[RMDB]
RNA sequence: GGGAACGACUCGAGUAGAGUCGAAAAGAUAUGGAACUGUCCCAUCGCUUUGGUCCGUUGAAAUCGGUCGUCUCUCGGAAACGAGAGACGACCGAUGGAGGACCAUUGCGAAGACAGUUCCUAAGUCCUAAAAUGAGUUCUUCGGAACUCAUUUUAGAAAAGAAACAACAACAACAAC
Reactivity to DMS in 0.01 (KOAc 150mM, MgCl2 10mM, bicine 150mM(pH8.5), 24C), signal-to-noise 1, nucleotides 027 to 126: g000a060u000a300u010g010g000a020a010c000u000g010u010c000c050c200a180u000c000g030c000u000u010u000g010g020u000c010c000g000u010u030g050a120a170a030u000c010g060g020u000c000g030u000c020u010c000u000c040g030g000a110a090a250c010g000a060g000a020g060a030c000g030a020c060c010g000a010u000g000g000a140g010g020a020c000c000a010u000u000g000c000g020a070a120g000a000c000a010g000u000u000c010c000u000a010a100g010u000c040